An RNA of 177 nucleotides, treated with DMS and 2A3 and read out base by base. Values cover nucleotides 27 to 126. For 2A3 the reverse transcriptase was SuperScript II with manganese. The reactions ran in a buffer of 150 mM KOAc, 10 mM MgCl2 and 150 mM bicine (pH 8.5), at 24 C.
RNA sequence: GGGAACGACUCGAGUAGAGUCGAAAAAGAGCAUGUCUUACCAGGAGCAAGAUGAACUUUUUGCCAUGACAAAGCGUAACGUCAUUCCUACCAUGACUCAAAUGAAUCUAAAAUAUGCUAUUAGUGCCUCCUUAUGAGUGUUCGCACUCAUAAGGAGAAAAGAAACAACAACAACAAC
Reactivity to DMS in 0.01 (KOAc 150mM, MgCl2 10mM, bicine 150mM(pH8.5), 24C), signal-to-noise 2, nucleotides 027 to 126: a040g030a100g020c070a040u000g020u000c050u000u010a090c100c050a120g010g000a140g020c050a090a030g010a010u000g000a020a070c100u010u000u000u000u000g020c150c080a080u020g020a060c060a030a150a110g010c040g010u000a070a040c180g000u010c020a070u000u000c030c020u020a070c090c040a060u020g000a080c040u010c020a060a050a070u000g020a050a040u000c020u010a030a040a050a050u020a070u000g000c030u000a100u010u000a100g000u010g000c110
Reactivity to 2A3 in 0.01 (KOAc 150mM, MgCl2 10mM, bicine 150mM(pH8.5), 24C), signal-to-noise 3, nucleotides 027 to 126: a010g050a000g000c040a040u020g000u040c000u070u060a080c030c030a040g060g030a040g020c010a020a030g030a070u070g030a070a100c050u030u030u030u050u070g060c010c060a110u090g010a060c030a010a050a010g000c050g070u030a090a000c040g000u000c010a030u010u020c010c010u010a040c020c010a060u070g050a100c020u020c070a070a060a050u130g020a050a080u070c040u120a050a030a040a070u120a040u060g030c020u030a090u160u080a080g020u020g060c000
DMS adducts were read by reverse transcription with MarathonRT.